[RMDB]
RNA sequence: GGGAACGACUCGAGUAGAGUCGAAAAGCGCGCGAGAGGCGGGACGAUUGUUUUUCGUCGUCGUCAAGGACGGCGUAGGCGUAGUCGGGGUGCUUACCGUGGUUCUACGGAGGUACGCUCCGCGCGGCGAGGCUAAUACUUUCGAGUAUUAGCCUCGAAAAGAAACAACAACAACAAC
Reactivity to DMS in 0.01 (KOAc 150mM, MgCl2 10mM, bicine 150mM(pH8.5), 24C), signal-to-noise 4, nucleotides 027 to 126: g010c020g010c000g030c010g010a120g010a080g020g010c040g010g020g010a020c010g000a110u000u020g000u000u000u000u000u000c000g030u000c000g010u000c000g030u010c300a150a200g010g000a020c000g010g000c000g020u000a010g010g010c010g000u000a070g010u000c010g010g000g010g010u000g000c010u000u000a080c000c010g020u000g010g010u010u010c120u010a030c000g010g000a090g000g010u000a020c030g000c000u000c000c010g000c010g010c010g010g000
Reactivity to 2A3 in 0.01 (KOAc 150mM, MgCl2 10mM, bicine 150mM(pH8.5), 24C), signal-to-noise 2, nucleotides 027 to 126: g030c010g000c000g000c000g000a200g000a010g220g130c090g040g060g010a010c000g020a030u050u050g060u060u030u000u040u030c000g000u000c010g010u000c000g060u090c060a030a060g140g000a000c010g010g000c000g000u010a020g010g000c000g000u000a010g010u010c030g000g000g030g000u050g000c020u030u130a300c000c010g000u020g010g230u290u040c030u130a000c000g020g000a000g010g020u020a030c030g000c010u000c000c000g000c000g000c000g000g000